[RMDB]
RNA sequence: GGGAACGACUCGAGUAGAGUCGAAAAGAUAUGGACGGAUUCAAGCAACAGCCAUGACAUCGGAAACGAUGUAUGGACAUGCUUGGGAUCCGUCCUAAGUCAAACAGCUACCGUUCGCGGUAGCUGAGGUAUGUGUAGACUUCGGUCUACACAUACCAAAAGAAACAACAACAACAAC
Reactivity to DMS in 0.01 (KOAc 150mM, MgCl2 10mM, bicine 150mM(pH8.5), 24C), signal-to-noise 4, nucleotides 027 to 126: g010a040u010a300u010g000g010a020c000g020g010a010u000u000c010a020a010g000c000a080a120c300a240g000c000c020a010u010g030a010c010a000u000c010g000g020a120a080a180c000g030a010u000g010u000a000u000g000g000a050c060a220u010g000c000u000u010g020g000g000a010u000c000c000g020u000c020c000u000a000a070g010u000c020a130a130a280c000a010g000c000u000a000c000c000g010u000u020c240g020c000g000g020u000a000g010c000u000g000a020
Reactivity to 2A3 in 0.01 (KOAc 150mM, MgCl2 10mM, bicine 150mM(pH8.5), 24C), signal-to-noise 4, nucleotides 027 to 126: g010a000u060a010u110g000g000a000c020g010g000a010u000u000c010a010a010g000c050a090a130c050a240g070c030c000a050u120g300a050c000a000u000c000g050g010a060a050a040c020g010a010u000g010u020a000u000g010g010a020c040a090u300g000c010u010u050g070g000g000a000u000c000c000g000u000c000c000u000a000a010g000u000c000a020a010a090c010a010g000c000u010a000c030c010g050u070u110c300g000c020g130g000u000a010g000c000u000g000a010
The record gives the reactivity of an RNA of 177 nucleotides to DMS and 2A3. The DMS profile rests on 5,364 reads. Reactivities are given for positions 27 through 126. Source: RMDB library TTRDES, as collected in RNAgym. The RNA was probed in 150 mM KOAc, 10 mM MgCl2 and 150 mM bicine (pH 8.5) at 24 C.